[RMDB]
The record gives the reactivity of an RNA of 177 nucleotides to DMS and 2A3. DMS adducts were read by reverse transcription with MarathonRT. The data come from the RNA Mapping Database (RMDB), libraries RFM100 and RFMREP.
RNA sequence: GGGAACGACUCGAGUAGAGUCGAAAAGGGCAUUGUCCAUGUGCCGACUUUGCAGAGGAACGGCGCAAACAAAGGCAAAUUCGACUGACGGAGGAACGGAGUCACCAAGAAUUUAAUGGACAAUGAACCCCAAGGAUGUCUUCGGACAUCCUUGGGGAAAAGAAACAACAACAACAAC
Reactivity to DMS in 0.01 (KOAc 150mM, MgCl2 10mM, bicine 150mM(pH8.5), 24C), signal-to-noise 3, nucleotides 027 to 126: g000g010g050c020a010u000u000g000u000c020c020a050u000g050u000g020c020c000g000a210c300u000u000u000g000c050a140g060a150g020g020a090a180c200g040g000c060g000c020a030a020a020c120a050a090a280g000g020c030a030a030a030u000u000c020g000a090c170u000g000a140c030g020g000a070g000g000a070a150c100g000g020a200g000u010c000a080c100c060a170a190g000a030a030u000u010u030a130a020u000g000g000a010c030a010a000u000g000a120a130
Reactivity to 2A3 in 0.01 (KOAc 150mM, MgCl2 10mM, bicine 150mM(pH8.5), 24C), signal-to-noise 4, nucleotides 027 to 126: g050g010g020c000a000u000u010g000u000c010c000a020u050g030u030g030c000c010g030a050c040u060u050u110g070c100a060g010a060g240g080a220a070c050g100g010c030g000c050a030a070a010c090a050a140a030g050g010c030a020a000a030u010u010c030g030a020c050u060g020a040c000g040g110a150g080g080a130a020c070g040g060a090g040u000c000a020c060c030a050a030g010a000a000u030u070u100a060a050u020g000g010a000c010a000a010u010g020a040a080